[RMDB]
RNA sequence: GGGAACGACUCGAGUAGAGUCGAAAAGUAGGUUUCGACCUACGUUAUCACCUUUGUGGGUUUCUAUAAUCACUGAACUACAUGACGAUAUGCCCAUUGGGCAUAUCUCAUGCAGUGGUAGAAACCCACUCUGGUACCAGAGGAAGUUCGCUUCCAAAUUUCUCGUUUAUUUCGAUAAACGAGAAAUAAAAGAAACAACAACAACAAC
Reactivity to 2A3 in 0.01 (KOAc 150mM, MgCl2 10mM, bicine 150mM(pH8.5), 24C), signal-to-noise 6, nucleotides 027 to 156: g020u020a010g020g050u020u070u170c240g100a060c000c000u000a000c000g000u010u070a160u250c070a020c000c000u020u010u010g000u000g000g010g010u020u000u000c060u040a130u080a200a220u210c010a010c010u010g050a090a040c040u160a030c300a010u010g000a010c120g010a010u000a000u000g010c000c030c150a300u160u300g010g000g000c010a000u000a000u000c000u000c000a000u000g000c000a000g000u000g000g000u010a010g000a000a000a010c000c010c000a000c000u000c000u000g000g000u020a050c020c040a070g070a070g210g000a020a020g010u080u140c140g110c110u000u030c000c000a070a110
Reactivity to DMS in 0.01 (KOAc 150mM, MgCl2 10mM, bicine 150mM(pH8.5), 24C), signal-to-noise 3, nucleotides 027 to 156: g000u000a010g010g020u000u000u010c210g030a070c010c010u000a010c010g000u010u010a070u000c060a060c020c020u010u000u010g010u000g040g020g010u010u000u000c000u000a040u000a220a120u010c070a210c130u020g020a090a160c030u000a130c000a010u000g010a050c090g040a000u000a010u000g010c000c020c020a300u000u000g030g010g020c000a020u000a010u000c010u010c000a000u000g000c000a020g020u010g040g010u000a020g010a000a020a020c010c000c010a000c000u010c020u000g010g020u010a060c040c010a090g000a140g000g020a090a090g000u010u010c160g010c020u000u000c000c000a060a210